Record summary: Chemical mapping of a 177-nucleotide RNA with DMS and 2A3. For DMS, 2,538 sequencing reads were counted.

RNA sequence: GGGAACGACUCGAGUAGAGUCGAAAAUUAGGCCUCGGGGGAUAAAUUGAAUUUUUAUUUGGAAUUUUAGAACCGUAGAGGGUGAUAGUCCCGUAGAUAUAUUCUCUUUUUGAGGUUUUGUGUAUGACAUCAUGUCACAGUUCGCUGUGACAUGAUGAAAAGAAACAACAACAACAAC
Reactivity to DMS in 0.01 (KOAc 150mM, MgCl2 10mM, bicine 150mM(pH8.5), 24C), signal-to-noise 2, nucleotides 027 to 126: u020u010a060g020g000c000c000u000c000g000g000g010g020g010a120u000a000a070a040u000u000g010a020a010u000u060u060u000u020a050u000u050u010g020g000a160a060u000u000u020u020a040g010a170a140c000c000g060u010a070g020a140g020g000g000u010g010a100u010a030g010u010c020c010c000g010u020a200g000a030u010a060u030a040u020u020c020u000c010u000u030u050u000u030g030a020g000g000u010u010u020u010g000u000g010u020a060u000g000a300
Reactivity to 2A3 in 0.01 (KOAc 150mM, MgCl2 10mM, bicine 150mM(pH8.5), 24C), signal-to-noise 1, nucleotides 027 to 126: u030u030a000g030g030c000c000u020c000g020g000g000g000g020a000u050a030a080a040u010u060g030a060a050u010u000u000u050u190a140u070u080u210g180g030a070a040u060u040u140u080a050g030a010a020c110c010g020u090a020g000a010g100g000g000u000g030a030u080a040g000u000c000c020c000g010u020a020g000a010u000a000u020a040u070u080c000u000c000u000u160u080u060u230g000a000g070g000u120u030u120u100g060u000g000u000a120u120g000a020
For DMS the reverse transcriptase was MarathonRT.
The data come from the RNA Mapping Database (RMDB), library RFM100.